The record gives the reactivity of an RNA of 207 nucleotides to 2A3 and DMS. 2A3 adducts were read by reverse transcription with SuperScript II with manganese. The DMS profile rests on 1,334 reads.
[RMDB]
RNA sequence: GGGAACGACUCGAGUAGAGUCGAAAAACAAGCAAAAGAAGCUGGAGUACUCUGCACUCCGGGACAAUCAGGAGCGAGAGCGGCCGCAGAUAACUUCGCAGGCGAAUUAUACACUUAUACUUAUCUGAAUAUUAGCGCUCGAUCAAUGCUCACGAAAUAUCCAAAGAUAGUUCGCUAUCUUUGGAUAAAAAGAAACAACAACAACAAC
Reactivity to 2A3 in 0.01 (KOAc 150mM, MgCl2 10mM, bicine 150mM(pH8.5), 24C), signal-to-noise 2, nucleotides 027 to 156: a000c010a040a000g060c030a020a040a070a280g090a060a060g040c000u010g010g000a000g010u040a030c030u010c070u140g050c020a000c010u020c010c000g020g020g020a050c060a010a100u160c060a090g030g000a000g000c030g010a020g020a010g080c070g170g020c010c000g000c010a010g020a010u030a000a040c030u160u090c110g010c070a030g050g000c010g040a000a010u190u150a180u040a130c070a020c030u050u120a020u130a190c020u080u030a050u090c020u020g080a120a040u090a170u300u140a070g060c030g010c010u020c010g070a090u110c050a070a060u220g000c020u000c040a050c010g000a020a030a000
Reactivity to DMS in 0.01 (KOAc 150mM, MgCl2 10mM, bicine 150mM(pH8.5), 24C), signal-to-noise 1, nucleotides 027 to 156: a070c010a060a140g000c000a130a040a140a210g000a120a300g000c010u030g010g000a100g030u000a110c040u000c210u010g030c100a090c000u000c040c000g000g000g000a200c130a130a200u020c050a060g020g000a050g000c010g000a020g000a070g010c070g050g000c040c110g060c060a040g000a060u000a060a040c040u020u010c130g040c110a030g050g050c000g040a110a110u000u010a240u000a150c040a030c000u010u010a090u000a010c050u000u020a010u000c010u020g010a110a100u000a110u000u000a080g050c020g060c050u000c000g000a060u010c010a100a180u000g000c020u000c060a150c070g000a070a050a270